[RMDB]
RNA sequence: GGGAACGACUCGAGUAGAGUCGAAAACGCAUCGAGGAUGGAGACUCAAAAGGGAUAGCGUUUGCGAGGGGCUCUUCGCACCAUCCACAACGCCUAGGCAGUAUCGAGCCAUUGCCUAUGAACGCUACUCUGAUAUGCUGUUCGCAGCAUAUCAGAGAAAAGAAACAACAACAACAAC
Reactivity to DMS in 0.01 (KOAc 150mM, MgCl2 10mM, bicine 150mM(pH8.5), 24C), signal-to-noise 3, nucleotides 027 to 126: c070g030c060a050u000c090g000a100g020g020a090u000g010g000a160g020a070c080u010c080a050a040a110a110g010g000g010a100u000a070g010c010g030u000u020u010g010c050g010a040g010g000g000g010c120u010c050u000u000c070g000c020a070c030c020a050u000c000c030a080c140a060a050c110g010c040c040u000a030g000g000c000a040g010u000a090u010c100g000a090g000c070c080a040u010u000g010c020c010u000a030u010g000a060a050c060g000c060u000a080
Reactivity to 2A3 in 0.01 (KOAc 150mM, MgCl2 10mM, bicine 150mM(pH8.5), 24C), signal-to-noise 3, nucleotides 027 to 126: c050g010c030a080u090c060g090a020g080g010a040u060g070g000a080g040a090c020u020c140a050a060a050a060g120g030g020a040u070a040g000c000g020u010u050u110g040c020g020a030g020g040g050g050c080u010c000u190u030c020g000c000a040c020c000a020u020c000c010a030c020a080a040c060g010c030c030u030a020g020g000c000a020g040u070a030u220c110g060a040g040c000c020a050u080u020g010c010c000u050a070u120g060a060a010c050g010c030u060a080